Structure probing data (DMS and 2A3) for a 207-nucleotide construct.
Values cover nucleotides 27 to 156.
For 2A3, 2,860 sequencing reads were counted.
The RNA was probed in 150 mM KOAc, 10 mM MgCl2 and 150 mM bicine (pH 8.5) at 24 C.

RNA sequence: GGGAACGACUCGAGUAGAGUCGAAAACUGACGAAAAAGAUGCCGGACACUAGCGGCGACUCUUAUCUGACCUGGUUCACCAAGAACCACCCGAACAUCACCAUUACGGCGAUGGCGGAGCUGGAAGAUAUUGACGGCGCAGGCACCAAAGGCGUGCCCGUACCACUGUAUUCGUACAGUGGUACGGAAAAGAAACAACAACAACAAC
Reactivity to DMS in 0.01 (KOAc 150mM, MgCl2 10mM, bicine 150mM(pH8.5), 24C), signal-to-noise 2, nucleotides 027 to 156: c000u020g040a230c030g000a070a100a070a110a130g000a050u000g010c050c010g020g000a300c100a050c040u010a130g000c090g020g010c010g000a050c030u000c040u000u020a060u000c040u010g050a120c030c000u020g060g090u000u000c010a120c080c200a110a190g010a020a070c000c000a140c060c000c000g030a050a040c000a040u010c020a030c000c000a300u000u010a070c220g050g010c000g000a030u000g010g010c000g040g010a090g050c070u000g010g020a300a040g000a050u000a080u000u000g040a130c050g050g020c010g000c030a130g040g000c000a020c030c020a000a050a210g000g000c040g010u000g030c040
Reactivity to 2A3 in 0.01 (KOAc 150mM, MgCl2 10mM, bicine 150mM(pH8.5), 24C), signal-to-noise 5, nucleotides 027 to 156: c030u060g090a030c070g090a060a000a060a020a060g100a050u150g000c020c030g070g030a070c050a040c130u110a060g000c010g100g030c020g050a070c030u010c010u050u040a020u020c020u060g220a300c000c020u040g000g000u000u020c050a060c150c090a100a130g010a020a010c000c000a010c000c000c000g020a060a040c010a010u020c010a030c040c000a090u200u300a120c160g020g000c030g010a010u000g010g020c010g030g000a090g070c090u040g030g010a070a000g010a010u030a040u070u170g020a040c020g020g070c030g000c050a020g050g000c040a020c020c010a080a110a030g010g030c050g020u050g020c000